[RMDB]
RNA sequence: GGGAACGACUCGAGUAGAGUCGAAAAGAACGAGUGAAGGAAGGAAGGAAUGAAUUGUUCUGAGAGGCUCCCGAGGCUUCUCUGAUACUCUCAGAUCAUGCCUGCUGAUGCACACUCUUUUGGGAGGUGGAUAAACAGCACCUGGGCCUGCUCAAAACAGUAAAUACCAUUUCGAUGGUAUUUACUGAAAAGAAACAACAACAACAAC
Reactivity to 2A3 in 0.01 (KOAc 150mM, MgCl2 10mM, bicine 150mM(pH8.5), 24C), signal-to-noise 6, nucleotides 027 to 156: g050a030a020c050g010a010g030u080g030a060a030g030g010a020a010g010g010a030a020g020g030a050a060u080g040a070a110u150u060g020u060u030c030u030g010a010g010a020g020g030c050u050c060c080c040g030a050g040g040c080u270u110c010u090c020u030g010a010u060a140c030u020c000u000c040a000g010a040u030c020a020u120g020c000c020u020g010c020u030g020a070u110g030c030a010c000a060c040u050c030u040u180u140u100g090g030g000a030g000g030u020g000g020a040u080a110a170a010c010a010g020c010a010c020c030u020g010g020g010c010c020u040g020c000u030c030a050a110a040a050
Reactivity to DMS in 0.01 (KOAc 150mM, MgCl2 10mM, bicine 150mM(pH8.5), 24C), signal-to-noise 3, nucleotides 027 to 156: g000a040a030c050g010a080g020u000g020a090a130g010g010a120a120g000g020a070a040g010g000a070a120u010g020a090a100u000u010g010u000u000c050u010g010a060g010a050g020g010c060u000c040c040c090g020a100g020g010c080u010u010c010u000c020u000g000a090u010a060c060u000c030u000c010a040g020a040u000c050a060u010g020c050c030u000g030c040u000g010a110u000g000c030a100c070a050c020u000c010u000u000u000u000g010g010g030a050g000g030u000g000g010a120u010a050a030a120c040a080g010c020a080c030c020u000g020g030g030c010c020u000g000c020u010c060a060a080a100a150